An RNA of 177 nucleotides, treated with DMS and 2A3 and read out base by base. For 2A3, 4,846 sequencing reads were counted. Values are in units of 0.01, from 0 to 300, in steps of 10. Reactivities are given for positions 27 through 126. The reactions ran in a buffer of 150 mM KOAc, 10 mM MgCl2 and 150 mM bicine (pH 8.5), at 24 C. For 2A3 the reverse transcriptase was SuperScript II with manganese.

RNA sequence: GGGAACGACUCGAGUAGAGUCGAAAACUCAUCGAGUUCGCUCGAUGAGAAAAUAAAAACCGUCUAUCCCGACGUUAAAGGGAUGAAAAAUAAACGUCAAAAAAAGAGAGCUGUUCGCAGCUCUCAACAAGUAUUAGGAGUUCGCUCCUAAUACUUGAAAAGAAACAACAACAACAAC
Reactivity to DMS in 0.01 (KOAc 150mM, MgCl2 10mM, bicine 150mM(pH8.5), 24C), signal-to-noise 3, nucleotides 027 to 126: c000u000c000a010u010c000g010a020g010u000u000c180g030c000u010c000g010a010u000g000a000g000a000a010a030a040u010a070a070a060a090a110c080c000g000u010c000u010a050u000c000c000c000g010a000c000g000u000u010a010a050a060g000g000g000a000u010g000a010a080a060a090a080u010a040a070a090c160g000u020c090a010a010a080a090a040a130a250g000a000g000a000g000c000u000g010u000u000c180g000c000a010g000c010u000c000u000c000a010a090
Reactivity to 2A3 in 0.01 (KOAc 150mM, MgCl2 10mM, bicine 150mM(pH8.5), 24C), signal-to-noise 4, nucleotides 027 to 126: c000u010c000a000u000c000g020a010g030u060u060c120g050c100u000c000g000a010u010g000a010g010a020a170a000a000u050a020a040a000a000a010c010c000g020u010c010u040a090u010c000c010c000g000a000c010g020u060u060a040a010a020g000g000g000a020u050g030a100a110a020a020a010u220a040a170a040c080g100u080c140a060a100a020a000a000a160a020g010a010g000a000g000c020u010g050u080u080c220g020c150a000g000c010u000c000u000c000a000a000